[RMDB]
RNA sequence: GGGAACGACUCGAGUAGAGUCGAAAACAAGAGGCAUGAUUGGAUGGAGCUUCUAAUGUCAUUCAAAAAGGCCUGGUCAGUGCCUGUCUGGCCUAGGGCCACUCCCACCUGCAGGACAUUAAAAUCUCCAGGCCUGUGACACUGGCAACUGGCCUCAACCAUAAAUGGAGUUCGCUCCAUUUAUGGUAAAAGAAACAACAACAACAAC
Reactivity to DMS in 0.01 (KOAc 150mM, MgCl2 10mM, bicine 150mM(pH8.5), 24C), signal-to-noise 2, nucleotides 027 to 156: c050a140a160g010a050g050g030c000a120u010g030a230u000u020g010g010a160u000g020g000a130g010c080u010u000c050u000a020a020u030g000u010c020a060u000u030c050a060a120a130a180a070g000g010c000c000u000g040g010u000c030a050g020u010g010c030c020u000g020u000c040u000g000g040c070c030u010a060g010g080g010c070c060a070c150u000c050c040c050a190c040c060u000g010c090a080g000g010a020c040a060u020u010a030a080a040a080u020c020u010c000c000a040g010g010c000c020u000g000u000g000a080c050a050c060u010g000g010c050a030a050c020u000g010g000c010c000u000c030a150
Reactivity to 2A3 in 0.01 (KOAc 150mM, MgCl2 10mM, bicine 150mM(pH8.5), 24C), signal-to-noise 4, nucleotides 027 to 156: c060a030a100g010a000g030g040c020a030u050g040a190u150u200g040g020a100u080g010g030a050g050c050u100u040c070u240a060a030u040g000u010c040a060u100u070c080a160a050a090a080a060g000g010c020c020u040g020g020u050c070a060g010u020g140c020c000u050g030u060c050u020g000g020c010c040u080a140g030g020g000c030c040a060c030u050c000c020c000a020c010c010u030g000c070a060g000g030a020c000a010u110u140a040a040a020a100u050c030u030c020c000a030g090g030c030c000u030g010u030g010a020c040a010c080u020g040g000c020a060a040c050u060g040g000c000c000u000c000a010